Structure probing data (DMS and 2A3) for a 177-nucleotide construct.
Values cover nucleotides 27 to 126.
2A3 adducts were read by reverse transcription with SuperScript II with manganese.
The DMS profile rests on 5,817 reads.
The data come from the RNA Mapping Database (RMDB), library TTRDES.
The reactions ran in a buffer of 150 mM KOAc, 10 mM MgCl2 and 150 mM bicine (pH 8.5), at 24 C.
[RMDB]
RNA sequence: GGGAACGACUCGAGUAGAGUCGAAAAGAUAUGGAUGCAAUAAGCAACAGCCAUGAGGUCGGAAACGACCUAUGGACAUGCUUGAUGCAUCCUAAGUCAAACUAGUAGUUGUUCGCAACUACUAGAAGUUUAAGCAAUUCUUCGGAAUUGCUUAAACAAAAGAAACAACAACAACAAC
Reactivity to DMS in 0.01 (KOAc 150mM, MgCl2 10mM, bicine 150mM(pH8.5), 24C), signal-to-noise 4, nucleotides 027 to 126: g010a010u000a060u010g010g000a020u000g010c010a030a060u010a010a010g020c010a130a080c280a150g000c020c000a000u000g010a030g010g010u000c000g020g010a010a010a040c010g020a020c000c000u000a000u000g010g010a020c060a190u010g010c010u000u000g010a080u000g000c010a000u000c000c000u000a000a060g000u000c010a140a130a270c000u000a000g010u010a000g010u000u000g010u010u020c250g040c000a000a010c000u000a010c000u000a000g010a090a110
Reactivity to 2A3 in 0.01 (KOAc 150mM, MgCl2 10mM, bicine 150mM(pH8.5), 24C), signal-to-noise 5, nucleotides 027 to 126: g010a000u030a000u030g000g000a010u000g000c020a020a090u090a140a030g020c160a100a130c100a280g000c010c010a020u180g300a040g040g000u010c000g010g010a010a000a000c000g000a010c010c000u000a000u000g000g020a010c020a170u300g000c000u000u010g020a020u020g010c000a000u000c000c010u000a000a000g010u020c020a060a030a160c000u000a010g010u000a000g000u010u010g030u080u050c280g020c160a000a000c000u020a000c010u000a010g000a030a010
Notes
For 2A3, 11,453 sequencing reads were counted.